[RMDB]
RNA sequence: GGGAACGACUCGAGUAGAGUCGAAAAGGGCUUGACGCAUCGCCCGAAUACGAUGCAUGUGCUUUUGCACUAAGAUAAAUGUCCGUAUCGUAGGGGACAUAGAACCUACUCAUUAAUGUCCGAAGAGUCUGGGACGAUCAUCAGGCGAGACUAAGAACGCUAUAUACGUGUUCGCACGUAUAUAGCGAAAAGAAACAACAACAACAAC
Reactivity to 2A3 in 0.01 (KOAc 150mM, MgCl2 10mM, bicine 150mM(pH8.5), 24C), signal-to-noise 6, nucleotides 027 to 156: g060g010g000c010u020u020g020a020c040g010c050a000u020c020g000c000c000c000g010a030a040u060a030c030g000a010u010g000c040a060u080g020u030g000c010u130u140u240u300g010c010a010c010u080a100a060g070a130u130a090a180a050u210g040u020c050c050g040u040a030u040c010g000u010a020g020g080g000g000a000c030a000u100a030g060a030a010c020c020u020a030c020u010c030a040u050u220a120a040u080g010u000c000c010g010a090a040g040a070g080u010c110u170g050g010g070a120c050g010a020u040c010a020u020c010a000g010g020c030g020a050g040a050c050u060a090a050g010a210a030
Reactivity to DMS in 0.01 (KOAc 150mM, MgCl2 10mM, bicine 150mM(pH8.5), 24C), signal-to-noise 2, nucleotides 027 to 156: g000g000g010c020u010u000g000a100c070g030c010a040u000c010g050c010c020c040g000a080a110u000a020c010g000a050u000g020c010a130u020g000u000g050c020u010u000u030u020g020c000a040c040u010a080a070g010a110u000a050a100a130u000g010u000c010c080g010u000a100u000c050g000u000a140g030g000g000g000a030c020a070u000a060g000a050a080c030c020u000a010c020u000c040a240u000u000a060a110u010g020u000c000c020g040a100a130g010a100g000u000c060u000g000g030g020a060c010g000a050u000c030a040u010c010a040g000g030c010g000a150g000a110c070u010a080a090g040a100a210
An RNA of 207 nucleotides, treated with 2A3 and DMS and read out base by base. For DMS, 3,897 sequencing reads were counted. The reactions ran in a buffer of 150 mM KOAc, 10 mM MgCl2 and 150 mM bicine (pH 8.5), at 24 C. For 2A3 the reverse transcriptase was SuperScript II with manganese.